[RMDB]
RNA sequence: GGGAACGACUCGAGUAGAGUCGAAAAUUUUGGGCAGAUAACAACUGUUACGCGUCUUGCCACUGUAUUGUAAACACUAGAACAAAUUUUAAGUUUAAUACACCUACGCGACAAGAUGAAUCGGAAAAUUCAGUACAGAGUUCGCUCUGUACUGAAUAAAAGAAACAACAACAACAAC
Reactivity to DMS in 0.01 (KOAc 150mM, MgCl2 10mM, bicine 150mM(pH8.5), 24C), signal-to-noise 3, nucleotides 027 to 126: u000u000u030u000g010g010g010c000a010g010a080u000a100a160c190a080a130c050u010g010u000u000a110c090g030c060g000u010c010u000u000g010c010c000a100c070u010g020u000a030u010u000g010u000a030a050a090c120a080c080u010a090g000a050a070c100a070a070a120u000u010u000u000a040a110g000u000u000u010a030a090u000a020c020a030c180c070u010a020c100g000c030g010a030c030a030a020g000a020u010g000a100a130u010c090g000g000a060a070a080
Reactivity to 2A3 in 0.01 (KOAc 150mM, MgCl2 10mM, bicine 150mM(pH8.5), 24C), signal-to-noise 3, nucleotides 027 to 126: u120u110u080u080g020g020g000c010a000g030a050u120a170a040c020a080a040c050u040g040u050u070a070c080g020c010g020u000c010u000u030g010c000c010a040c060u050g000u000a010u030u050g050u080a010a060a020c050a030c090u050a060g060a250a010c080a130a260a190u050u220u070u110a110a000g000u010u010u020a040a020u030a000c000a010c000c040u050a040c030g000c020g050a040c000a000a000g000a080u040g020a060a080u140c020g030g020a040a120a040